[RMDB]
Source: RMDB library TTRDES, as collected in RNAgym. An RNA of 177 nucleotides, treated with 2A3 and DMS and read out base by base.
RNA sequence: GGGAACGACUCGAGUAGAGUCGAAAAGAUAUGGAGGAUAGGUAUGAACUACUCUCCCGUGUCGGAAACGACACCCGAGAGCAUACUAGUAUCCUCCUAAGUCAAAAGAACUAGUUCGCUAGUUCAACAUACGAAAAGCGUUCGCGCUUUUCGUAUGAAAAGAAACAACAACAACAAC
Reactivity to 2A3 in 0.01 (KOAc 150mM, MgCl2 10mM, bicine 150mM(pH8.5), 24C), signal-to-noise 2, nucleotides 027 to 126: g020a030u110a050u190g000g010a010g000g030a000u010a050g070g020u030a010u040g020a060a060c060u180a090c010u300c000u020c050c040c020g000u000g010u030c000g000g020a030a090a090c020g010a000c000a010c030c020c010g000a000g000a000g040c030a010u000a020c000u060a080g300u020a030u000c010c000u000c010c010u000a000a010g000u000c000a010a010a040a090g000a010a000c000u000a000g050u070u110c300g000c170u000a010g010u020u000c020a000a010
Reactivity to DMS in 0.01 (KOAc 150mM, MgCl2 10mM, bicine 150mM(pH8.5), 24C), signal-to-noise 3, nucleotides 027 to 126: g000a030u010a300u010g000g010a010g010g020a010u000a060g000g000u000a010u000g010a080a070c090u010a300c010u000c000u000c000c020c200g000u000g010u010c000g020g000a080a080a230c020g030a010c000a000c010c090c250g020a000g000a020g000c020a010u000a010c000u000a120g010u000a010u000c010c000u000c000c000u000a000a110g010u010c050a100a110a090a090g000a030a010c000u000a010g000u000u010c300g020c020u000a000g000u000u000c010a140a180